[RMDB]
RNA sequence: GGGAACGACUCGAGUAGAGUCGAAAAGAUAUGGAGAGGUACAUAUCUCGAGGAUCGGAAACGAUCCCGAGUAAGUGUACUACCCACCUCCUAAGUCAAAACUUGGUACCCUUCGGGGUACCAAGAACAUUAUAGGAGCCUUCGGGCUCCUAUAAUGAAAAGAAACAACAACAACAAC
Reactivity to DMS in 0.01 (KOAc 150mM, MgCl2 10mM, bicine 150mM(pH8.5), 24C), signal-to-noise 2, nucleotides 027 to 126: g000a130u010a120u000g000g000a020g010a110g000g010u030a010c000a010u000a300u020c010u000c000g020a160g020g030a000u000c000g010g000a100a070a170c000g000a010u000c010c010c000g000a000g000u000a010a230g020u000g000u000a000c000u000a120c050c030c020a300c100c000u000c000c000u000a090a110g010u010c090a050a050a090a140c000u000u000g000g000u000a000c000c000c000u000u010c240g000g010g010g000u000a000c000c000a000a000g000a090a150
Reactivity to 2A3 in 0.01 (KOAc 150mM, MgCl2 10mM, bicine 150mM(pH8.5), 24C), signal-to-noise 1, nucleotides 027 to 126: g030a070u160a060u220g000g030a020g010a000g070g020u010a010c000a000u070a080u190c010u010c010g090a300g010g000a000u010c010g000g030a130a060a000c000g030a010u000c030c010c020g020a000g020u050a230a140g010u000g010u000a000c010u080a100c050c040c000a040c000c010u000c000c000u060a100a030g230u300c130a060a070a110a170c030u000u000g020g000u040a020c000c020c020u010u100c240g010g040g000g000u000a010c020c000a010a010g000a020a010